An RNA of 207 nucleotides, treated with 2A3 and read out base by base. The reactions ran in a buffer of 150 mM KOAc, 10 mM MgCl2 and 150 mM bicine (pH 8.5), at 24 C. It was measured as part of the RMDB library RNAMAK. For 2A3 the reverse transcriptase was SuperScript II with manganese.
RNA sequence: GGGAACGACUCGAGUAGAGUCGAAAAUUUCAGUUCGCUGAAAUCGCCGAUAUGGAACGCUGGGAGAGCCAGAACUACUUUCGAAAUGUCGGAAACGACAUAGAAAGCUGGCUCGAAGAACAGCGUUCCUAAGUCCUAAUCCGUACUUCGGUACGAAUUUGUUAUGGACGUUCGCGUCCAUAACAAAAAAAGAAACAACAACAACAAC
Reactivity to 2A3 in 0.01 (KOAc 150mM, MgCl2 10mM, bicine 150mM(pH8.5), 24C), signal-to-noise 1, nucleotides 027 to 156: u010u000u000c010a000g030u030u050c150g050c040u000g000a000a020a020u090c090g120c100c050g030a060u020a000u070g000g000a000a010c010g010c000u000g000g010g040a230g030a000g050c030c000a010g020a110a060c110u300a050c010u210u000u000c000g030a200a090a300u020g000u000c000g010g000a000a020a020c000g000a000c010a000u000a050g010a000a000a000g000c000u000g010g000c000u000c000g000a010a010g000a010a000c010a000g000c000g000u000u000c000c000u000a000a000g000u000c000c000u030a030a040u100c120c000g030u000a000c020u040u060c270g060g000u010a000c030g090a050a100